Structure probing data (2A3) for a 177-nucleotide construct. The data come from the RNA Mapping Database (RMDB), library OK1LIB. Values cover nucleotides 27 to 126. For 2A3, 662 sequencing reads were counted.
[RMDB]
RNA sequence: GGGAACGACUCGAGUAGAGUCGAAAAACUCAGCGCUCUUGUCGCGAGCGCGGGUCUAUCUGCUGAAAUCGUUGACCACUGACGAUAUUGAGCAAGUACUGGACCAGGCGAUGCAGGACAAAACGCGGGAUCGCUGGUCAUUCGUGACCAGCGAUCCAAAAGAAACAACAACAACAAC
Reactivity to 2A3 in 0.01 (KOAc 150mM, MgCl2 10mM, bicine 150mM(pH8.5), 24C), signal-to-noise 2, nucleotides 027 to 126: a000c040u070c060a030g000c000g010c030u110c020u030u120g050u090c000g040c080g130a030g060c000g000c010g000g000g000u000c000u060a190u040c000u000g060c000u060g230a070a000a000u000c000g000u000u040g090a130c060c160a070c290u230g000a040c020g000a020u020a300u090u060g030a000g000c010a070a030g050u020a180c050u100g020g000a000c000c000a020g030g080c000g000a000u150g010c010a040g080g050a040c010a000a030a000a000c080g000c000g030